RNA sequence: GGGAACGACUCGAGUAGAGUCGAAAACGUUCGCGGCGUGGACGCUGGCCGCCGUGUCGCUGCGGGGGCCGCGGUCGCGGUGGUGGCUGGCGGCGCAGGCGGCGACGGCGCUGGCCGUCCAGGCGCUGGUGCUGUCGCCGUGGUGAUCCGCGGCGGGCUUACGGUAAGCAUUCGUGCUUACCGUAAGAAAAGAAACAACAACAACAAC
Reactivity to 2A3 in 0.01 (KOAc 150mM, MgCl2 10mM, bicine 150mM(pH8.5), 24C), signal-to-noise 1, nucleotides 027 to 156: c060g040u280u290c030g000c000g040g030c040g010u050g060g050a060c000g020c000u000g010g040c060c060g000c000c000g010u040g050u020c010g010c070u040g030c090g030g140g020g080g060c050c010g000c000g000g020u120c010g030c010g020g030u180g070g040u120g010g000c000u020g090g000c010g040g000c030g000c060a050g100g080c010g000g000c020g000a000c000g000g010c000g010c000u010g000g020c060c010g040u070c060c090a120g140g000c110g000c060u030g000g000u000g010c000u020g030u000c000g020c010c000g010u040g020g000u090g040a080u050c000c000g000c000g000g000c000g000g000g000
This 207-nucleotide RNA was probed chemically with 2A3. Conditions: 150 mM KOAc, 10 mM MgCl2 and 150 mM bicine (pH 8.5), 24 C. 2A3 adducts were read by reverse transcription with SuperScript II with manganese.